Chemical mapping of a 170-nucleotide RNA with DMS and 2A3.
DMS adducts were read by reverse transcription with MarathonRT.
RNA sequence: GGGAACGACUCGAGUAGAGUCGAAAAGACUGGGAAAGAAAAGAGAGCAACGGGGCUAGCUGCCGGGUGUUCCACCUACGGGAACGGUGCCGAGUGAGGCUUAUCCCGGGGGGUAGCGCUCCGUGCCGAAGGCGCAGCUUCGGCUGCGCCAAAAGAAACAACAACAACAAC
Reactivity to DMS in 0.01 (KOAc 150mM, MgCl2 10mM, bicine 150mM(pH8.5), 24C), signal-to-noise 3, nucleotides 027 to 129: g000a080c060u000g010g000g040a070a030a020g040a070a020a050a090g040a080g040a100g000c050a110a060c000g010g020g020g020c020u000a070g070c020u010g000c010c000g000g060g030u060g030u020u010c050c020a130c060c040u000a070c000g000g020g030a040a050c180g000g000u030g040c020c040g040a160g040u070g030a120g040g000c050u040u090a090u020c030c010c040g000g000g010g000g000g000u000a030g030c060g030c020u030c000c000g030u030g000c020c020g000a010a010
Reactivity to 2A3 in 0.01 (KOAc 150mM, MgCl2 10mM, bicine 150mM(pH8.5), 24C), signal-to-noise 4, nucleotides 027 to 129: g030a020c060u030g020g020g010a020a060a040g000a010a040a020a020g080a010g010a020g030c040a040a040c000g020g000g000g010c030u030a050g000c000u040g020c010c000g040g010g010u090g030u050u040c050c020a060c010c000u080a100c070g010g000g040a050a030c060g090g080u160g030c020c030g000a040g060u250g090a080g030g000c010u040u130a120u070c000c000c000g010g010g000g030g000g020u030a040g000c000g000c010u010c010c020g000u010g010c000c000g020a020a020